[RMDB]
An RNA of 170 nucleotides, treated with 2A3 and DMS and read out base by base.
RNA sequence: GGGAACGACUCGAGUAGAGUCGAAAAUCGGAGGAGACCGAAGCGAGGAGGAAAGCAAAGAAAGCAACGGGGCUAGCGAGUGGAUGUUCCGCCCCCCGAGGGGGCCGAGUGAGGCUUAUCCCGGGGAAUAGAGUUGCCUUCGGGCAACUCAAAAGAAACAACAACAACAAC
Reactivity to 2A3 in 0.01 (KOAc 150mM, MgCl2 10mM, bicine 150mM(pH8.5), 24C), signal-to-noise 2, nucleotides 027 to 129: u080c000g000g000a000g030g010a020g000a010c000c010g010a080a020g060c040g000a020g020g020a020g010g000a050a010a000g010c030a070a010a010g030a080a050a000g040c010a000a060c100g010g000g000g030c020u080a030g040c010g010a060g000u030g020g030a110u040g090u100u050c010c010g060c010c000c000c000c000c030g000a160g020g000g000g000g000c010c000g000a030g110u210g090a040g000g000c000u030u020a090u060c030c030c000g000g000g000g000a000a080u060a040
Reactivity to DMS in 0.01 (KOAc 150mM, MgCl2 10mM, bicine 150mM(pH8.5), 24C), signal-to-noise 2, nucleotides 027 to 129: u030c070g000g050a050g000g010a150g010a060c100c070g080a080a010g030c200g010a020g000g000a070g000g000a000a030a090g020c270a000a040a060g020a090a010a040g010c030a100a120c080g020g000g020g050c040u050a150g050c070g020a090g010u020g000g060a080u040g020u000u020c020c050g050c070c010c030c000c010c010g040a050g000g070g060g000g000c000c060g000a140g030u040g020a060g050g030c100u010u090a110u100c000c000c000g000g040g040g030a110a110u060a080
Reactivities are rounded to 0.1 and cut off at 0 and 3.
DMS adducts were read by reverse transcription with MarathonRT.
2A3 is a SHAPE reagent: it acylates the 2'-hydroxyl of flexible nucleotides of all four kinds.
Reactivities are given for positions 27 through 129.